[RMDB]
RNA sequence: GGGAACGACUCGAGUAGAGUCGAAAACGGAAACACCAGCCUCGUAUAGAGUGUCAAGGUAACGAGUAAGAUCGGGAUACUGUUUAGCAAGACCCUCAUGUGUGAAGUCUUGGUUUGCCCGUGUCUCAGAGAUAACCUGUGGGUCUUCAUCCAGAAGCAUGGUUCAAAAGUUCGCUUUUGAACCAUGAAAAGAAACAACAACAACAAC
Reactivity to 2A3 in 0.01 (KOAc 150mM, MgCl2 10mM, bicine 150mM(pH8.5), 24C), signal-to-noise 7, nucleotides 027 to 156: c020g010g020a060a030a000c040a020c040c010a010g010c010c000u030c020g060u130a170u180a240g040a020g030u210g050u120c070a080a070g030g000u030a040a030c030g000a010g040u090a080a020g020a130u050c040g020g010g000a030u070a140c020u060g090u130u090u090a060g030c050a040a000g010a020c010c010c010u030c060a110u130g100u030g020u030g130a100a040g030u010c020u060u110g070g030u080u060u120g080c010c010c010g040u040g040u000c010u000c030a070g030a010g010a080u050a090a060c010c010u030g010u080g050g030g000u020c000u030u010c010a050u050c040c020a020g000a040a010g050
Reactivity to DMS in 0.01 (KOAc 150mM, MgCl2 10mM, bicine 150mM(pH8.5), 24C), signal-to-noise 5, nucleotides 027 to 156: c040g010g010a120a080a070c060a070c010c030a100g000c020c000u010c030g030u010a140u010a100g010a100g020u010g020u000c050a060a090g020g020u000a060a080c050g010a100g020u000a120a160g000a120u010c020g030g000g020a170u000a040c040u000g020u000u000u000a120g020c040a050a090g010a030c010c020c010u000c050a110u010g020u000g010u000g010a080a080g010u010c030u000u010g040g030u000u000u000g010c040c030c050g020u000g000u000c010u010c020a160g010a150g010a090u000a050a080c040c040u000g020u000g010g020g030u000c030u000u000c030a120u000c050c020a130g010a090a140g010

Conditions: 150 mM KOAc, 10 mM MgCl2 and 150 mM bicine (pH 8.5), 24 C. Chemical mapping of a 207-nucleotide RNA with 2A3 and DMS. 2A3 adducts were read by reverse transcription with SuperScript II with manganese. Source: RMDB library OK3TST, as collected in RNAgym.